[RMDB]
RNA sequence: GGGAACGACUCGAGUAGAGUCGAAAAGCCACGCUAUUCGUAGCGUGGCGGUUAAGAUCUAGACAAAAACUGACAAAAAGUCUACAUCAAAUAAAGUCAGAACGGUCCGGGAUUUCGAUCCCGGAAACUUCUUUCGUAUAUUCGUAUACGAAAGAAGAAAAGAAACAACAACAACAAC
Reactivity to 2A3 in 0.01 (KOAc 150mM, MgCl2 10mM, bicine 150mM(pH8.5), 24C), signal-to-noise 3, nucleotides 027 to 126: g000c000c000a000c000g000c000u020a020u070u090c180g120u030a000g010c000g000u000g010g000c000g000g000u080u030a030a010g020a040u030c030u050a010g000a020c010a000a060a020a110a120c000u010g010a000c010a000a120a010a010a000g010u010c010u030a080c060a130u120c060a010a030a030u050a020a040a020g010u000c000a010g020a140a070c060g050g030u000c000c000g020g000g000a000u070u070u120c140g040a010u020c020c000c000g000g030a010a010a000
Reactivity to DMS in 0.01 (KOAc 150mM, MgCl2 10mM, bicine 150mM(pH8.5), 24C), signal-to-noise 4, nucleotides 027 to 126: g020c000c000a020c000g010c000u000a010u000u020c170g020u000a000g010c000g040u000g010g010c000g000g000u000u010a080a160g000a110u010c030u000a020g010a010c010a010a030a080a100a130c020u000g000a030c000a030a050a040a040a030g000u000c010u000a060c200a080u000c120a010a030a020u000a020a100a230g000u000c010a020g000a210a110c240g000g000u000c000c000g000g000g020a020u000u000u020c170g000a030u000c000c000c010g000g010a000a020a030